RNA sequence: GGGAACGACUCGAGUAGAGUCGAAAACAUGCCUCGUUCCAAUUGGCGCUUGUUGAUUAAGAUGCUUACUUCUUCAUCUGUUCCUUGAGCGCCAGAAGCUUGGCGAAAGGCGAAUCGGGGUCGAUAACCUGCCUAGUCCUUUCGAGGACUAGGCAGGAAAAGAAACAACAACAACAAC
Reactivity to DMS in 0.01 (KOAc 150mM, MgCl2 10mM, bicine 150mM(pH8.5), 24C), signal-to-noise 1, nucleotides 027 to 126: c160a140u000g010c000c000u000c080g020u000u000c020c030a060a140u010u000g030g020c000g020c000u010u000g020u000u000g050a050u030u000a010a040g010a010u000g000c300u000u030a130c250u000u000c210u030u000c000a000u000c020u010g030u000u010c030c030u000u000g000a020g000c010g050c000c000a030g000a050a090g000c210u000u000g000g030c050g000a190a080a040g010g000c050g010a080a060u010c050g000g000g090g000u000c100g020a080u020a130a210
Conditions: 150 mM KOAc, 10 mM MgCl2 and 150 mM bicine (pH 8.5), 24 C. This 177-nucleotide RNA was probed chemically with DMS. DMS adducts were read by reverse transcription with MarathonRT. The data come from the RNA Mapping Database (RMDB), library OK2TST. For DMS, 714 sequencing reads were counted.